Description: Conditions: 150 mM KOAc, 10 mM MgCl2 and 150 mM bicine (pH 8.5), 24 C. Chemical mapping of a 177-nucleotide RNA with DMS and 2A3. For DMS the reverse transcriptase was MarathonRT. High 2A3 reactivity points to a flexible backbone, as in loops and unpaired stretches.
RNA sequence: GGGAACGACUCGAGUAGAGUCGAAAAGAUAUGGACAACUCCGGAUCGAAGAACGAACAUACCAUCACAGCCACUCGGAAACGAGUGGUCACAGUGGUAUGUUCGGGAGAUCGAGUUGUCCUAAGUCGCGGUAGAAUUAGUUCGCUAAUUCUACCGCAAAAGAAACAACAACAACAAC
Reactivity to DMS in 0.01 (KOAc 150mM, MgCl2 10mM, bicine 150mM(pH8.5), 24C), signal-to-noise 1, nucleotides 027 to 126: g010a150u010a300u000g000g000a030c000a000a000c000u010c030c300g030g020a020u000c000g000a120a260g000a190a300c030g000a000a000c010a000u000a000c010c010a030u000c050a190c300a300g000c010c000a000c070u000c000g020g000a140a020a240c000g030a030g010u020g000g000u000c060a070c300a110g000u000g000g000u000a000u000g000u000u050c010g020g000g000a090g030a000u020c000g000a070g000u010u000g000u000c000c000u060a000a050g000u010c080
Reactivity to 2A3 in 0.01 (KOAc 150mM, MgCl2 10mM, bicine 150mM(pH8.5), 24C), signal-to-noise 1, nucleotides 027 to 126: g010a040u130a030u200g020g000a010c030a000a000c030u130c250c300g300g070a050u050c060g180a300a030g030a130a020c020g000a000a000c000a030u000a010c050c000a060u210c030a060c060a020g000c000c000a000c000u040c060g030g100a040a080a030c000g020a000g000u000g000g000u000c000a000c020a010g020u030g000g000u010a000u010g000u020u000c030g020g030g000a020g010a000u000c010g010a010g000u020u000g010u000c010c010u000a030a010g040u070c080